[RMDB]
RNA sequence: GGGAACGACUCGAGUAGAGUCGAAAACAGGUAGCCCAGACCUUCAAGGCUACGGUGCGUUGCCACGCACGGUCUGAUUCUUCACAACGACGUUCACCGCGUCUUCUUCCAUCCCCCUGGGGCAGUGUAUAACCAGCAGCCUUCGGGCUGCUGGUAAACUACGUUAUACCUUCGGGUAUAACGUAGUAAAAGAAACAACAACAACAAC
Reactivity to DMS in 0.01 (KOAc 150mM, MgCl2 10mM, bicine 150mM(pH8.5), 24C), signal-to-noise 1, nucleotides 027 to 156: c070a120g040g030u000a070g030c000c010c180a030g010a080c030c000u010u020c030a070a220g000g030c000u000a020c000g010g020u000g010c000g040u000u010g050c070c170a200c030g060c020a060c060g010g030u000c020u000g010a290u000u010c000u000u030c090a110c080a090a150c030g020a100c040g030u000u040c040a140c040c070g010c030g040u000c010u000u010c030u000u010c010c020a160u000c000c000c000c050c030u000g000g000g040g020c050a050g060u000g020u010a120u000a090a100c000c040a000g010c000a020g000c060c020u010u020c300g060g000g050c000u000g080c030u010g000g000u020a010a040
This 207-nucleotide RNA was probed chemically with DMS. It was measured as part of the RMDB library M2RFPK. The RNA was probed in 150 mM KOAc, 10 mM MgCl2 and 150 mM bicine (pH 8.5) at 24 C. For DMS, 1,794 sequencing reads were counted.